[RMDB]
RNA sequence: GGGAACGACUCGAGUAGAGUCGAAAAUUGUGGAUUGCUUGUGUGCUGGCAGGCUACUACUGGUAAGAAUGGCUAGUGUCAGCAGGGAUGGCUCCUCUCUGGGUUCCAUCUCACCAAGAUGAGUGGUUAAUACACACGUAUUCGUACGUGUGUAUUAAAAAGAAACAACAACAACAAC
Reactivity to DMS in 0.01 (KOAc 150mM, MgCl2 10mM, bicine 150mM(pH8.5), 24C), signal-to-noise 6, nucleotides 027 to 126: u010u010g010u000g010g010a130u000u000g000c030u000u000g010u000g010u000g030c000u010g010g010c000a040g000g010c010u010a040c090u010a100c050u000g010g020u020a070a050g010a110a150u010g000g000c010u000a100g020u010g010u000c010a010g000c020a100g010g010g010a040u000g000g000c070u000c020c020u000c200u020c190u010g010g010g000u000u000c010c000a020u010c010u000c000a120c120c060a030a090g000a080u010g000a070g030u010g010g010u000
Reactivity to 2A3 in 0.01 (KOAc 150mM, MgCl2 10mM, bicine 150mM(pH8.5), 24C), signal-to-noise 7, nucleotides 027 to 126: u070u060g040u050g070g040a110u060u120g030c050u070u040g020u020g020u030g100c000u000g010g000c010a010g000g030c000u020a020c010u020a030c020u070g150g070u230a090a040g060a110a070u080g030g000c010u040a090g240u030g010u050c010a000g000c010a000g010g020g000a010u010g020g000c000u000c010c010u010c020u020c060u100g030g000g000u040u010c000c000a020u010c010u000c010a030c030c020a040a020g080a170u140g030a020g070u060g010g010u030

An RNA of 177 nucleotides, treated with DMS and 2A3 and read out base by base. DMS adducts were read by reverse transcription with MarathonRT. The reactions ran in a buffer of 150 mM KOAc, 10 mM MgCl2 and 150 mM bicine (pH 8.5), at 24 C.